[RMDB]
RNA sequence: GGGAACGACUCGAGUAGAGUCGAAAAAAGCUCCAAGAGGAGGCCUCGAGUCAGCUCAGAACAACAUGCCAACAGUGACUCUGUGCUUACUUUGUGCCAGGCAGUCUCUAGCCACUUCACAUCUCACUUAAGUUUUUAUUAGAGUCUUAAUGAAGUGAAACAACUUACUAUUCGUAGUAAGUUGUUUAAAAGAAACAACAACAACAAC
Reactivity to 2A3 in 0.01 (KOAc 150mM, MgCl2 10mM, bicine 150mM(pH8.5), 24C), signal-to-noise 6, nucleotides 027 to 156: a000a010g060c050u060c030c020a060a030g040a060g050g010a020g020g010c010c000u020c030g000a000g000u010c010a020g010c010u020c030a010g020a050a030c080a060a000c020a090u130g140c120c050a040a050c060a160g020u020g060a040c010u000c000u030g020u020g030c000u030u020a040c010u070u100u180g110u110g090c090c040a010g000g020c020a020g050u010c010u000c010u030a050g040c020c000a030c010u020u030c020a040c010a120u040c040u000c020a050c030u060u030a100a050g110u130u090u100u050u030a190u070u100a070g020a010g060u010c030u090u110a050a040u100g030a020a000g020u050g050
Reactivity to DMS in 0.01 (KOAc 150mM, MgCl2 10mM, bicine 150mM(pH8.5), 24C), signal-to-noise 4, nucleotides 027 to 156: a070a080g010c020u010c030c030a110a130g000a220g020g010a060g020g000c050c000u000c050g010a050g020u000c030a090g010c020u000c030a130g010a080a070c010a080a010c040a070u010g020c050c090a090a110c130a250g010u000g010a080c150u000c020u000g020u000g000c020u000u000a050c030u000u000u010g030u000g010c070c060a090g020g010c030a110g000u000c010u000c030u020a110g020c060c000a040c010u000u000c020a050c040a110u000c060u000c010a070c050u000u000a050a130g010u000u010u000u000u000a080u040u010a140g010a070g020u000c020u010u000a080a080u000g010a060a040g000u010g000